[RMDB]
RNA sequence: GGGAACGACUCGAGUAGAGUCGAAAACUAAUCUCGAAGAGCGUUUUGGGGGAUACGCACAGUGACCAUUCAAGCUGAUUGUGACACUGUGUAGGGUAGGUACUGAUUGGUUCUUCAAUCAGUAGAUCAAUUCUAAACUGUUCGCAGUUUAGAAUUGAAAAGAAACAACAACAACAAC
Reactivity to DMS in 0.01 (KOAc 150mM, MgCl2 10mM, bicine 150mM(pH8.5), 24C), signal-to-noise 6, nucleotides 027 to 126: c070u000a110a130u000c040u000c050g010a060a060g000a090g010c050g010u000u000u000u000g020g020g000g000g010a190u010a080c160g000c010a020c010a010g010u000g000a120c030c010a010u000u000c020a120a160g030c290u010g000a020u000u000g020u010g030a120c020a010c010u000g010u000g010u000a050g000g010g010u000a060g010g000u000a010c000u000g000a010u000u000g000g000u010u010c250u010u010c010a000a000u000c000a010g000u000a020g000a100u000
Reactivity to 2A3 in 0.01 (KOAc 150mM, MgCl2 10mM, bicine 150mM(pH8.5), 24C), signal-to-noise 6, nucleotides 027 to 126: c010u040a070a110u060c020u010c050g100a130a050g040a040g060c030g010u030u080u150u170g010g000g000g000g020a050u100a130c090g000c000a000c000a000g000u010g030a100c020c000a010u000u020c060a090a150g170c180u120g080a020u020u050g080u120g040a010c000a000c010u000g000u000g010u020a040g010g010g030u080a050g040g060u010a000c010u000g000a000u000u020g020g050u240u120c050u170u100c020a000a010u010c000a000g000u000a010g000a030u020
An RNA of 177 nucleotides, treated with DMS and 2A3 and read out base by base.